[RMDB]
RNA sequence: GGGAACGACUCGAGUAGAGUCGAAAAACGGGCAACGGUAGGUCAGUAUGCCCCGAAUGUGCUGGGCGACACGCGGGCUACAAUGGCCGAGACAGUGGGAUGCAACGCCGAAAGGCGACGCUAAUCUAGAUGUACUAAACUUCGGUUUAGUACAUCUAAAAGAAACAACAACAACAAC
Reactivity to 2A3 in 0.01 (KOAc 150mM, MgCl2 10mM, bicine 150mM(pH8.5), 24C), signal-to-noise 2, nucleotides 027 to 126: a000c020g020g040g000c030a000a040c030g040g050u090a040g010g060u060c030a020g020u030a060u200g010c010c000c010c000g090a120a100u180g040u020g030c060u120g020g130g000c030g060a020c000a000c020g040c080g000g000g010c000u020a010c050a070a200u060g020g000c010c000g010a000g010a000c040a020g020u070g040g000g000a000u110g000c010a060a030c010g010c000c010g030a050a030a020g000g000c010g000a020c040g000c020u040a040a050u040c030u040
Reactivity to DMS in 0.01 (KOAc 150mM, MgCl2 10mM, bicine 150mM(pH8.5), 24C), signal-to-noise 3, nucleotides 027 to 126: a120c140g010g000g020c060a050a050c110g000g020u010a090g010g010u000c020a070g010u010a070u010g010c040c000c000c050g000a120a080u000g020u000g010c040u000g000g010g010c050g000a140c060a000c120g010c060g010g020g000c030u000a050c100a110a060u000g010g000c020c010g020a090g000a090c110a070g010u010g010g000g010a110u000g030c000a060a300c010g030c010c000g020a070a090a140g010g010c010g010a040c300g010c040u000a060a070u010c090u000